[RMDB]
RNA sequence: GGGAACGACUCGAGUAGAGUCGAAAAGAUAUGGAUACUGAAAGGGAGCUUGGAUAAGCACGAAGAACGAUCUCGGAAACGAGAUCGGGAGUGCGUAACAAGCGAAGAACUUUCAGUAUCCUAAGUCGUGAUACUAAUUGUUCGCAAUUAGUAUCACAAAAGAAACAACAACAACAAC
Reactivity to DMS in 0.01 (KOAc 150mM, MgCl2 10mM, bicine 150mM(pH8.5), 24C), signal-to-noise 4, nucleotides 027 to 126: g010a060u000a240u010g000g000a000u000a010c000u000g000a000a010a000g000g000g020a110g020c010u000u000g010g010a120u010a160a260g000c000a020c010g010a140a180g030a230a210c010g000a010u000c000u000c000g000g010a110a080a160c010g030a000g020a000u000c000g010g000g000a050g020u000g000c000g020u010a140a250c000a000a000g030c000g000a030a120g010a120a130c000u010u000u000c000a010g020u000a000u000c000c000u020a000a060g010u000c110
Source: RMDB library TTRINS, as collected in RNAgym. Structure probing data (DMS) for a 177-nucleotide construct. The reactions ran in a buffer of 150 mM KOAc, 10 mM MgCl2 and 150 mM bicine (pH 8.5), at 24 C. The DMS profile rests on 4,945 reads.